RNA sequence: GGGAACGACUCGAGUAGAGUCGAAAACCAAUGGGAAACCAUUGGCAACUCGGAAACGAGUUGAACGCGGAAUUAGCUAUCAAACGCGCGACAAUGCGAUUUUAAGCAUUGUCGAUUACGCCCAUGUCGAUUUUAAGACAUGGAGCGAAGAUAGCAAGGAUCGUGCAGCGUUCGCGCUGUAUGAUCCAAAAGAAACAACAACAACAAC
Reactivity to DMS in 0.01 (KOAc 150mM, MgCl2 10mM, bicine 150mM(pH8.5), 24C), signal-to-noise 5, nucleotides 027 to 156: c000c000a020a010u000g000g000g010a260a120a240c000c000a010u000u000g000g010c010a020a040c000u000c010g010g010a200a110a220c010g010a050g010u000u000g000a070a100c020g010c020g030g010a160a160u000u000a120g010c010u000a010u010c000a100a130a090c030g020c030g020c000g000a030c000a010a010u000g000c000g010a280u000u000u010u000a110a300g000c000a000u000u000g000u000c000g000a040u000u000a050c000g000c000c010c000a000u000g000u000c000g000a270u000u000u000u000a110a270g000a030c000a020u000g000g010a050g040c010g010a040a100g000a010u000a010g020c030a220a300
Reactivity to 2A3 in 0.01 (KOAc 150mM, MgCl2 10mM, bicine 150mM(pH8.5), 24C), signal-to-noise 9, nucleotides 027 to 156: c000c000a000a000u010g000g000g020a050a030a020c000c000a000u000u000g010g000c000a000a000c000u000c000g000g040a080a070a050c010g000a000g000u000u000g010a060a020c010g000c010g010g030a170a110u110u040a090g000c000u000a000u000c000a040a010a030c010g000c000g000c000g000a000c000a000a000u000g010c020g120a180u030u090u120u300a110a010g000c000a000u000u000g000u000c000g000a000u000u020a020c010g000c000c000c000a000u000g000u000c020g050a110u030u080u070u300a090a020g000a000c000a000u000g000g000a020g000c000g000a020a010g000a000u000a000g000c010a000a060

Chemical mapping of a 207-nucleotide RNA with DMS and 2A3. It was measured as part of the RMDB library OK3TST. For DMS the reverse transcriptase was MarathonRT. 2A3 adducts were read by reverse transcription with SuperScript II with manganese. The RNA was probed in 150 mM KOAc, 10 mM MgCl2 and 150 mM bicine (pH 8.5) at 24 C. Reactivities are rounded to 0.1 and cut off at 0 and 3.